[RMDB]
RNA sequence: GGGAACGACUCGAGUAGAGUCGAAAAGCGUACUACCGACGUUUGACGGUAGAGGGAGCUUAUGGAGACUCGUCCCAAAUAGGACGAGUUGACAUAAGCGAAGAACUCUACCCGAGUCGGUAUCGCAAAUCCAUAUACCCUUCGGGGUAUAUGGAAACAUAUUUUUUAAGUUCGCUUAAAAAAUAUGAAAAGAAACAACAACAACAAC
Reactivity to DMS in 0.01 (KOAc 150mM, MgCl2 10mM, bicine 150mM(pH8.5), 24C), signal-to-noise 2, nucleotides 027 to 156: g010c050g010u000a070c040u000a030c010c000g000a010c010g020u000u010u010g020a150c120g000g010u020a010g000a040g040g000g010a300g010c000u000u020a010u000g000g010a300g000a010c000u010c010g030u000c010c000c010a090a170a200u020a030g000g020a010c010g030a010g020u000u000g010a300c000a010u000a020a030g010c040g000a060a130g000a140a150c000u000c010u000a000c000c000c010g010a090g010u000c020g000g000u000a000u010c050g060c020a000a070a170u000c010c000a010u000a010u000a000c000c000c000u000u000c300g030g030g000g000u000a010u000a010u000g000g000a020a050a110
Reactivity to 2A3 in 0.01 (KOAc 150mM, MgCl2 10mM, bicine 150mM(pH8.5), 24C), signal-to-noise 2, nucleotides 027 to 156: g020c000g060u090a050c020u020a010c010c000g000a010c060g100u080u200u300g080a080c040g000g000u000a000g000a010g000g000g030a040g010c000u010u000a000u010g010g000a050g000a020c000u010c000g020u010c000c010c010a200a300a180u300a090g000g000a000c000g000a000g000u000u010g000a000c000a000u010a000a000g000c000g000a040a000g050a020a000c000u000c000u010a000c010c020c020g000a000g000u000c000g010g010u010a040u040c000g000c020a000a100a070u020c000c000a000u010a000u000a010c020c000c000u000u060c260g070g000g000g000u000a000u010a000u010g010g000a000a000a010